[RMDB]
RNA sequence: GGGAACGACUCGAGUAGAGUCGAAAAUCUAGGCAGACCAACACUCCCAACCCAGAAGGGUUGGGGAUUGCUAGAAAGCCCUUUCCCAGAUAGCCUCACACCUGAGUCUUAAGUCUGGCGGCUAUGCUAAUCAUUUUUAACUGGCUGAUGGGUGCCCUGCAGACUAUAGAUUCGUCUAUAGUCUGCAAAAAGAAACAACAACAACAAC
Reactivity to DMS in 0.01 (KOAc 150mM, MgCl2 10mM, bicine 150mM(pH8.5), 24C), signal-to-noise 1, nucleotides 027 to 156: u020c050u000a100g020g040c060a080g000a300c040c020a070a100c040a050c040u020c010c000c000a040a030c000c000c000a130g050a260a200g020g040g000u010u000g000g010g030g010a010u010u010g010c030u000a090g000a100a220a300g010c010c000c020u000u010u020c020c010c000a190g000a040u000a080g000c040c000u000c020a080c070a110c070c040u000g000a130g000u000c050u000u030a070a150g030u000c000u000g010g030c020g020g050c010u000a040u000g000c020u000a000a030u040c210a180u010u010u000u000u000a000a050c010u000g010g010c000u010g030a150u010g000g020g020u000g000c010c020c080
Reactivity to 2A3 in 0.01 (KOAc 150mM, MgCl2 10mM, bicine 150mM(pH8.5), 24C), signal-to-noise 2, nucleotides 027 to 156: u030c020u040a040g050g150c050a050g080a140c040c030a060a060c030a050c100u080c020c010c010a000a000c000c000c000a080g160a300a210g030g000g000u000u000g010g000g000g000a000u000u050g000c000u020a020g010a070a060a020g020c000c000c000u020u100u010c000c010c000a000g020a000u040a000g020c000c000u040c000a090c020a060c080c060u050g010a030g090u050c020u080u090a100a030g030u030c000u030g030g020c030g020g000c040u030a050u120g010c000u060a030a040u150c080a150u070u150u010u140u100a110a070c040u010g030g000c000u020g000a050u070g010g030g000u030g000c000c000c000
Chemical mapping of a 207-nucleotide RNA with DMS and 2A3. It was measured as part of the RMDB library OK3TST. DMS adducts were read by reverse transcription with MarathonRT. Conditions: 150 mM KOAc, 10 mM MgCl2 and 150 mM bicine (pH 8.5), 24 C. For 2A3 the reverse transcriptase was SuperScript II with manganese.